[RMDB]
RNA sequence: GGGAACGACUCGAGUAGAGUCGAAAAUUGGCCUGACUGUAUUUCGAUCAGCAAGAAAUUCAGAGGCGAAAGCCGGGCCUAGCGAACCUCAGAGUCCUCCUUGAUGGGGGCCUGAGAUGACAGAAAAGAAACGCUAACCGUUCGCGGUUAGCGUUUCAAAAGAAACAACAACAACAAC
Reactivity to 2A3 in 0.01 (KOAc 150mM, MgCl2 10mM, bicine 150mM(pH8.5), 24C), signal-to-noise 1, nucleotides 027 to 126: u030u080g020g000c040c080u100g110a130c000u000g000u000a000u000u040u000c080g010a140u160c080a110g110c080a120a110g030a000a030a000u040u060c000a000g050a000g040g000c000g000a070a010a000g000c000c000g000g000g000c000c000u000a000g020c000g060a050a030c000c000u000c000a050g040a180g050u120c020c020u010c000c030u210u220g210a300u300g080g010g000g000g000c000c030u000g000a000g000a000u040g000a020c040a000g100a000a160a000a000